The record gives the reactivity of an RNA of 177 nucleotides to DMS and 2A3. The RNA was probed in 150 mM KOAc, 10 mM MgCl2 and 150 mM bicine (pH 8.5) at 24 C. 2A3 adducts were read by reverse transcription with SuperScript II with manganese. It was measured as part of the RMDB library OK2TST. For 2A3, 1,238 sequencing reads were counted.

[RMDB]
RNA sequence: GGGAACGACUCGAGUAGAGUCGAAAAGCUGAAUCCUUCCGUGUCUGUCAGCCUUCCCUCCUGCAGGCACAAGCUCAGCCAGGUGGACUUCACCAGCUGGGCACCAGGGGGUAGCUGGGGCAACCUACUCGGCUAUUUAGUUCGCUAAAUAGCCGAGAAAAGAAACAACAACAACAAC
Reactivity to DMS in 0.01 (KOAc 150mM, MgCl2 10mM, bicine 150mM(pH8.5), 24C), signal-to-noise 1, nucleotides 027 to 126: g030c000u000g000a180a090u010c010c020u000u000c080c110g030u000g010u000c010u000g000u020c010a030g000c030c040u040u000c020c000c010u000c280c030u030g000c000a010g000g010c020a050c040a080a100g010c030u000c030a040g000c020c020a160g020g010u000g020g010a300c220u000u000c010a000c010c000a300g010c000u000g000g020g000c000a020c190c150a090g000g000g000g000g020u000a030g010c010u010g010g000g000g000c180a060a070c030c040u020a060
Reactivity to 2A3 in 0.01 (KOAc 150mM, MgCl2 10mM, bicine 150mM(pH8.5), 24C), signal-to-noise 1, nucleotides 027 to 126: g020c030u060g050a120a080u060c030c030u150u000c060c030g050u000g010u000c010u020g230u150c010a000g010c010c070u090u000c010c010c000u040c000c000u000g000c040a000g020g050c010a010c000a020a000g020c000u020c030a010g030c080c040a170g000g000u060g050g090a300c090u290u120c270a010c010c010a000g000c000u020g020g010g000c040a020c000c010a050g050g000g000g000g020u040a020g040c010u010g000g000g000g020c030a000a010c000c000u030a060